[RMDB]
The data come from the RNA Mapping Database (RMDB), library OK3TST. Structure probing data (2A3 and DMS) for a 207-nucleotide construct. For 2A3 the reverse transcriptase was SuperScript II with manganese. DMS adducts were read by reverse transcription with MarathonRT.
RNA sequence: GGGAACGACUCGAGUAGAGUCGAAAAUAGUUGCACUGCACACCUCGUUCAAUGGGUUUAUGCAAAAGGGUCCAACGGAGUCGAGUCUCCAGGGUAACAAGAUCAUUAACGUGCCACAUGCCGCUGCUGCUGCUGACGGUCAAAAUUCAAAGACGCACGUAAUCGUAUACUUCGGUAUACGAUUACGAAAAGAAACAACAACAACAAC
Reactivity to 2A3 in 0.01 (KOAc 150mM, MgCl2 10mM, bicine 150mM(pH8.5), 24C), signal-to-noise 3, nucleotides 027 to 156: u120a010g070u020u090g000c040a020c070u060g000c020a030c010a050c070c010u020c050g070u220u110c130a160a090u150g010g010g000u070u130u140a110u160g030c040a060a010a080a060g000g040g020u010c050c000a050a010c070g000g000a000g040u050c050g030a040g030u010c030u000c000c000a000g030g050g030u060a020a060c070a110a040g010a060u090c000a060u130u260a080a040c080g000u030g020c000c020a020c020a050u120g010c030c000g030c020u080g010c000u050g020c020u050g000c040u020g060a040c020g000g010u050c020a000a050a000a110u100u130c060a090a000a070g070a030c110g010c120a020
Reactivity to DMS in 0.01 (KOAc 150mM, MgCl2 10mM, bicine 150mM(pH8.5), 24C), signal-to-noise 2, nucleotides 027 to 156: u020a110g000u000u000g030c020a110c070u020g040c020a100c060a050c060c030u050c070g010u000u000c120a130a130u020g010g020g030u000u000u020a070u000g020c090a060a060a130a110g040g010g010u000c030c040a110a120c050g000g010a070g020u010c060g010a170g000u000c020u000c010c020a150g000g020g030u010a050a110c030a100a060g000a140u040c010a080u000u000a090a060c070g020u000g000c040c010a050c070a080u000g030c030c000g010c010u020g020c000u000g000c030u000g020c000u000g020a090c040g060g080u000c010a020a070a040a160u020u010c090a080a070a140g000a100c040g020c040a090